[RMDB]
RNA sequence: GGGAACGACUCGAGUAGAGUCGAAAAGCAGGCAUGUGCUUUAUGCAGAGCACGCUGGUGUCCACUGCAUAAUGGACAUGUGUGAACCGAUUUACACAUCAGCGCAGAAAUCGGUUUCUGAAUGCCAAUCUACGCUUCAUUUCGAUGAGGCGUAGAUAAAAGAAACAACAACAACAAC
Reactivity to DMS in 0.01 (KOAc 150mM, MgCl2 10mM, bicine 150mM(pH8.5), 24C), signal-to-noise 9, nucleotides 027 to 126: g010c030a040g000g000c000a000u000g010u000g000c000u010u000u000a010u000g010c020a010g010a120g010c010a010c010g010c260u050g020g010u000g000u020c070c180a110c010u000g000c010a010u010a000a010u000g000g000a010c000a020u000g010u000g010u030g010a030a020c010c010g010a010u000u000u000a100c110a140c130a140u030c160a100g010c120g010c140a150g010a020a020a010u000c010g000g010u000u000u010c020u000g000a080a070u020g000c000c020a150
Reactivity to 2A3 in 0.01 (KOAc 150mM, MgCl2 10mM, bicine 150mM(pH8.5), 24C), signal-to-noise 9, nucleotides 027 to 126: g060c030a020g070g000c000a000u010g000u060g130c000u000u010u000a010u010g010c010a000g010a000g010c010a000c080g140c220u300g130g030u010g010u070c050c050a130c040u010g000c010a010u010a010a010u030g020g040a000c010a000u010g020u020g120u090g030a010a000c000c000g000a000u000u020u130a130c130a020c020a110u240c120a100g120c080g010c150a030g090a030a020a000u010c000g020g000u000u030u010c020u020g080a080a030u110g040c010c010a020